The data come from the RNA Mapping Database (RMDB), library OK3TST. This 207-nucleotide RNA was probed chemically with 2A3 and DMS. 2A3 adducts were read by reverse transcription with SuperScript II with manganese. The RNA was probed in 150 mM KOAc, 10 mM MgCl2 and 150 mM bicine (pH 8.5) at 24 C. Reactivities are given for positions 27 through 156. For DMS the reverse transcriptase was MarathonRT.
[RMDB]
RNA sequence: GGGAACGACUCGAGUAGAGUCGAAAAGACGUGGAGGUCUCGCGCCCUCCUUUGCGCGUAAGUACGUCGAAAUUCGGUGCUUUGGAUCGCACCGUAUGAUCCAUUAGAUAUCCGCUUUGUGCCGCGGUUGGGCAUUUACACUUACCCGAAAGGGGAACGUAAUCCACCUAUUCGUAGGUGGAUUACGAAAAGAAACAACAACAACAAC
Reactivity to 2A3 in 0.01 (KOAc 150mM, MgCl2 10mM, bicine 150mM(pH8.5), 24C), signal-to-noise 3, nucleotides 027 to 156: g010a010c000g020u060g000g030a060g080g050u020c030u030c070g030c020g020c040c000c010u140c030c040u070u060u100g020c030g000c010g030u060a070a050g020u020a060c000g030u010c040g030a000a000a090u100u080c000g000g010u040g000c000u120u090u190g090g030a090u110c030g000c020a010c010c000g010u000a020u010g020a020u020c020c010a070u060u140a040g050a050u100a050u090c010c040g050c040u100u080u100g060u060g010c010c010g060c020g090g000u090u070g020g000g020c020a010u020u030u100a040c060a020c020u110u100a040c000c000c020g010a060a060a000g030g000g020g010a060a000
Reactivity to DMS in 0.01 (KOAc 150mM, MgCl2 10mM, bicine 150mM(pH8.5), 24C), signal-to-noise 2, nucleotides 027 to 156: g010a040c040g010u020g030g000a090g030g000u000c040u010c090g020c020g020c180c030c030u000c050c040u010u010u010g040c100g030c040g000u000a080a100g040u000a030c040g020u000c060g010a060a040a180u000u000c030g040g000u010g020c010u010u000u000g000g020a130u020c170g050c060a170c030c040g040u000a020u030g010a070u000c040c010a100u000u000a100g010a200u010a070u000c010c020g030c110u020u000u010g010u000g040c020c030g020c050g030g000u000u000g010g010g000c050a060u000u000u000a050c080a090c050u030u000a230c010c010c010g000a090a110a200g020g000g010g010a060a070